Record summary:
An RNA of 177 nucleotides, treated with DMS and 2A3 and read out base by base. 2A3 adducts were read by reverse transcription with SuperScript II with manganese.

[RMDB]
RNA sequence: GGGAACGACUCGAGUAGAGUCGAAAAGAUAUGGAGCGAUGCAGGCGCGAAACUAUCGGUCGGAAACGACCGAAUAGGAGCCUGUGCAUCGCUCCUAAGUCAAAACGGUGAGGUUCGCCUCACCGAAGUAUAUAACCGGGUUCGCCCGGUUAUAUACAAAAGAAACAACAACAACAAC
Reactivity to DMS in 0.01 (KOAc 150mM, MgCl2 10mM, bicine 150mM(pH8.5), 24C), signal-to-noise 3, nucleotides 027 to 126: g000a020u000a180u010g000g010a020g020c020g010a010u000g000c000a050g030g020c050g030c170g000a100a090a120c000u000a010u000c000g000g000u010c010g010g010a040a060a050c010g020a020c010c000g010a010a010u000a000g000g010a080g020c010c030u000g020u000g020c010a010u000c000g010c000u000c000c000u000a000a060g000u000c010a120a110a150a240c020g010g000u000g020a040g020g000u000u010c290g000c010c000u000c000a000c000c000g000a000a060
Reactivity to 2A3 in 0.01 (KOAc 150mM, MgCl2 10mM, bicine 150mM(pH8.5), 24C), signal-to-noise 1, nucleotides 027 to 126: g010a000u020a010u110g000g000a000g040c000g000a020u010g040c010a010g000g050c070g040c100g120a150a080a000c020u000a000u020c000g000g020u000c000g010g000a060a030a010c010g000a000c000c020g030a020a010u020a010g000g020a030g010c000c000u070g010u040g040c000a000u000c000g000c000u020c000c000u000a010a010g010u000c010a020a000a030a110c000g000g020u000g000a010g000g060u130u180c300g110c080c000u000c000a000c000c000g000a010a010
Source: RMDB library TTRDES, as collected in RNAgym.